[RMDB]
RNA sequence: GGGAACGACUCGAGUAGAGUCGAAAAUUCAGCUUGUCGUAGGUGUAGAACAUCCAUCUGGUAGCAAGCCAUCGGUAGCACUCGGUGCUGUUGGGUCUGUCCAUAGCAUCAAGCUCGUCAUAGAAACGAAGCGUCAUGUUCAGAUACCACCAAUCAACUGUACUUUUGAUUUCGAUCAAAAGUACAGAAAAGAAACAACAACAACAAC
Reactivity to 2A3 in 0.01 (KOAc 150mM, MgCl2 10mM, bicine 150mM(pH8.5), 24C), signal-to-noise 9, nucleotides 027 to 156: u090u060c030a020g010c020u030u060g060u110c030g110u160a030g000g020u040g020u050a090g050a200a050c030a080u040c040c000a020u010c040u040g050g000u060a040g020c010a030a010g010c020c000a090u100c060g080g030u070a020g010c020a010c050u100c090g060g030u030g010c030u030g050u070u060g010g000g020u010c020u030g040u000c020c000a010u020a070g020c030a050u070c050a070a020g000c010u000c010g020u010c040a190u070a270g090a090a120a000c010g050a100a020g010c000g050u090c030a020u040g010u020u030c010a000g020a040u060a300c020c020a020c010c030a030a060u110c040a020a090
Reactivity to DMS in 0.01 (KOAc 150mM, MgCl2 10mM, bicine 150mM(pH8.5), 24C), signal-to-noise 5, nucleotides 027 to 156: u000u010c060a080g010c000u000u010g030u000c030g010u010a070g040g030u010g010u010a140g030a070a300c070a110u000c080c020a040u000c020u020g030g010u000a070g010c030a050a070g020c020c030a100u000c050g000g000u000a080g020c060a100c030u000c040g010g000u000g030c000u000g000u010u010g030g010g040u000c060u000g030u000c010c010a080u000a070g000c030a040u000c050a050a100g000c010u010c010g010u000c040a160u000a220g000a130a080a040c020g000a080a110g020c020g020u000c070a050u010g010u000u000c060a070g000a120u000a050c030c020a030c020c020a040a250u010c020a070a220